Structure probing data (2A3 and DMS) for a 177-nucleotide construct. For 2A3 the reverse transcriptase was SuperScript II with manganese. Conditions: 150 mM KOAc, 10 mM MgCl2 and 150 mM bicine (pH 8.5), 24 C. It was measured as part of the RMDB library VIROID.

[RMDB]
RNA sequence: GGGAACGACUCGAGUAGAGUCGAAAAGUCGCCCAGGAAUGGCGGGACCCCACUUCAGCAGGGUCCGCGUUCCAUCCUUUCUUACCUGAUGGCCGGCAUGGUCCCAGCCUCCUCGCUGGCGCCGGCUCAUCUACAUAAGGUUCGCCUUAUGUAGAUGAAAAGAAACAACAACAACAAC
Reactivity to 2A3 in 0.01 (KOAc 150mM, MgCl2 10mM, bicine 150mM(pH8.5), 24C), signal-to-noise 9, nucleotides 027 to 126: g060u040c050g080c030c000c020a020g050g060a070a070u180g300g300c110g010g050g040a050c000c010c010c020a070c070u300u250c110a120g040c020a040g010g000g010u000c000c000g020c010g000u050u000c010c010a050u060c010c010u110u190u070c040u070u120a160c030c060u140g100a170u220g150g010c010c000g010g010c040a090u120g070g030u150c030c010c000a000g010c000c020u120c020c020u090c050g000c010u010g020g000c030g000c010c000g010g000c000u000
Reactivity to DMS in 0.01 (KOAc 150mM, MgCl2 10mM, bicine 150mM(pH8.5), 24C), signal-to-noise 6, nucleotides 027 to 126: g010u000c140g020c010c010c040a140g010g010a040a010u000g020g020c020g020g020g010a020c010c000c010c060a100c140u010u010c230a090g020c130a110g010g010g000u010c000c000g010c020g000u010u000c010c010a120u010c090c030u010u010u000c060u000u010a110c070c070u010g010a090u010g010g010c010c010g010g000c020a150u010g020g010u000c170c000c000a040g000c010c090u000c100c100u000c130g010c020u000g010g000c100g010c010c000g010g000c020u000